Source: RMDB library OK3TST, as collected in RNAgym. Structure probing data (2A3 and DMS) for a 207-nucleotide construct. Reactivities are given for positions 27 through 156. High 2A3 reactivity points to a flexible backbone, as in loops and unpaired stretches. The RNA was probed in 150 mM KOAc, 10 mM MgCl2 and 150 mM bicine (pH 8.5) at 24 C.
RNA sequence: GGGAACGACUCGAGUAGAGUCGAAAACGUCAUCACGAACAUCGCCGGUAGAAACCAAAUCACAUGGGACGACGAGGCCGAGGCUUUUUGCUUCGAGUUCGAAGAUAACUUGUAUUACAUCAACGAGCUCAACACGAACGCCAACAAGCCAAUCCACCGACCUAAAUAAAUUCGUUUAUUUAGGUCGAAAAGAAACAACAACAACAAC
Reactivity to 2A3 in 0.01 (KOAc 150mM, MgCl2 10mM, bicine 150mM(pH8.5), 24C), signal-to-noise 9, nucleotides 027 to 156: c020g040u020c020a090u080c040a040c080g060a070a030c060a100u080c070g020c060c030g020g020u090a060g120a130a090a060c060c040a050a080a090u160c050a050c040a150u100g020g020g020a020c040g020a010c030g030a060g040g010c030c010g020a040g010g020c020u020u050u010u050u090g040c050u040u060c060g000a010g000u010u000c010g000a020a000g010a010u050a070a080c060u070u070g060u170a120u170u240a130c100a050u020c010a020a020c000g000a010g010c000u010c020a020a050c050a020c150g030a030a000c080g010c030c000a010a020c020a060a000g000c000c000a010a050u020c030c010a050c010
Reactivity to DMS in 0.01 (KOAc 150mM, MgCl2 10mM, bicine 150mM(pH8.5), 24C), signal-to-noise 3, nucleotides 027 to 156: c040g020u000c040a100u000c060a140c070g000a110a090c040a090u000c050g030c050c030g000g020u000a100g010a110a080a160c040c020a050a090a230u010c050a180c090a080u010g010g030g010a130c040g000a070c010g010a110g000g020c010c070g000a120g030g010c010u000u000u000u000u000g020c030u000u000c030g030a040g040u000u000c000g030a100a300g000a080u010a030a080c060u000u000g020u000a100u020u000a090c130a130u010c080a150a300c020g000a010g080c010u000c010a030a020c020a060c080g030a020a030c110g010c000c010a020a020c080a050a030g020c000c000a080a140u010c030c020a140c150